[RMDB]
RNA sequence: GGGAACGACUCGAGUAGAGUCGAAAAGUGCAGAAAACCUGCACCACUUCCUCGAUGCCGGAGUGCUGGAAGUCCAUAGCUCCGCGGGAGCGUGGCAAGCCUCACCGAUGCGUUAUCGUAAUCAAGGAUUUGUUAGGUCAUUCGUGACCUAACAAAUAAAAGAAACAACAACAACAAC
Reactivity to 2A3 in 0.01 (KOAc 150mM, MgCl2 10mM, bicine 150mM(pH8.5), 24C), signal-to-noise 9, nucleotides 027 to 126: g000u000g000c030a000g080a090a170a020a060c020c000u010g000c000a000c000c010a040c030u030u010c000c000u000c010g010a010u040g010c010c010g080g020a130g020u140g030c010u000g060g020a070a050g040u030c000c000a020u040a160g000c000u030c000c050g220c110g190g070g000a000g000c010g000u000g010g000c020a030a020g040c000c000u020c010a080c020c030g080a070u130g040c040g060u060u120a040u050c040g040u100a070a070u130c080a070a090g120g000
Reactivity to DMS in 0.01 (KOAc 150mM, MgCl2 10mM, bicine 150mM(pH8.5), 24C), signal-to-noise 5, nucleotides 027 to 126: g000u000g010c000a030g000a190a080a100a220c280c000u010g000c000a000c010c060a090c160u010u000c000c010u000c050g020a040u010g010c020c010g000g000a050g030u020g010c060u000g000g010a080a050g000u010c010c000a000u020a100g010c000u000c010c010g030c220g030g000g030a030g000c030g000u000g000g010c040a150a060g000c010c020u000c030a100c100c050g020a120u020g010c070g010u010u010a040u010c030g010u030a100a080u010c100a090a140g010g010